[RMDB]
Structure probing data (2A3 and DMS) for a 177-nucleotide construct.
DMS adducts were read by reverse transcription with MarathonRT.
It was measured as part of the RMDB library TTRDEL.
In probing experiments dimethyl sulfate is read out at A N1 and C N3, which are open when not base-paired.
The 2A3 profile rests on 2,589 reads.
RNA sequence: GGGAACGACUCGAGUAGAGUCGAAAAGAUAUGGACGCACGCUUGGACCGUGGUCAGAGUCGGAAACGACUCUGAGCCACGCUAGCGUGGUCCUAAGUCAAAACCGUCUUCCUUCGGGAAGACGGAAGCCGUCAUAAGAGUUCGCUCUUAUGACGGCAAAAGAAACAACAACAACAAC
Reactivity to 2A3 in 0.01 (KOAc 150mM, MgCl2 10mM, bicine 150mM(pH8.5), 24C), signal-to-noise 1, nucleotides 027 to 126: g030a030u080a060u160g030g000a030c060g070c300a000c010g000c010u030u080g040g090a140c150c080g030u000g060g010u040c000a000g010a000g000u030c040g040g040a100a060a110c030g000a000c000u000c000u000g000a000g040c000c000a010c000g000c000u000a010g000c010g010u020g030g000u000c000c000u020a110a000g030u020c060a000a000a070a130c000c010g000u000c020u000u000c020c000u030u080c220g090g040g000a000a000g000a000c000g020g000a000a000
Reactivity to DMS in 0.01 (KOAc 150mM, MgCl2 10mM, bicine 150mM(pH8.5), 24C), signal-to-noise 1, nucleotides 027 to 126: g000a020u000a300u010g000g020a000c020g020c000a000c000g060c000u000u000g030g010a140c300c020g000u000g020g010u000c000a030g000a000g050u000c000g040g000a090a040a190c000g010a010c000u000c010u020g000a120g010c000c010a020c000g000c040u000a040g020c010g050u000g000g000u000c010c020u000a000a070g060u010c050a070a070a080a170c000c000g010u000c000u000u000c000c000u000u020c230g070g000g000a010a000g010a020c000g010g000a010a050